[RMDB]
RNA sequence: GGGAACGACUCGAGUAGAGUCGAAAAGAAAGAAAGAAGAAGAAGAAAAAGAGGUCAAACGUCAGAAUAUCGGGCGUAAAUACGACAUUAUGCAGAAAGACGACCUCAAUGUCGUAAAGAAAGAAAACCUCAGUAGUACCUUCGGGUACUACUGAGGAAAAGAAACAACAACAACAAC
Reactivity to 2A3 in 0.01 (KOAc 150mM, MgCl2 10mM, bicine 150mM(pH8.5), 24C), signal-to-noise 2, nucleotides 027 to 126: g040a010a120a000g160a050a080a000g040a050a000g040a000a000g020a000a020g090a010a060a030a000a000g020a010g000g000u000c000a000a090a090c110g020u020c000a020g070a170a040u170a190u250c100g060g020g000c000g000u020a080a010a000u070a040c040g000a000c020a000u010u080a040u110g110c090a010g200a090a080a020g080a010c050g060a130c010c030u040c070a020a000u040g000u000c000g000u050a070a000a000g100a000a050a010g020a000a080a010a000
Reactivity to DMS in 0.01 (KOAc 150mM, MgCl2 10mM, bicine 150mM(pH8.5), 24C), signal-to-noise 1, nucleotides 027 to 126: g000a110a010a000g000a020a030a000g000a120a000g020a030a000g000a040a100g000a160a010a040a060a080g000a000g020g000u000c120a110a150a030c120g040u040c010a060g000a070a160u060a100u020c050g000g000g000c000g000u020a100a080a080u000a000c000g000a020c000a000u010u000a030u000g070c090a070g000a090a010a020g020a060c160g010a070c020c000u010c000a050a010u000g000u000c000g030u000a000a090a120g000a040a050a030g010a030a020a060a160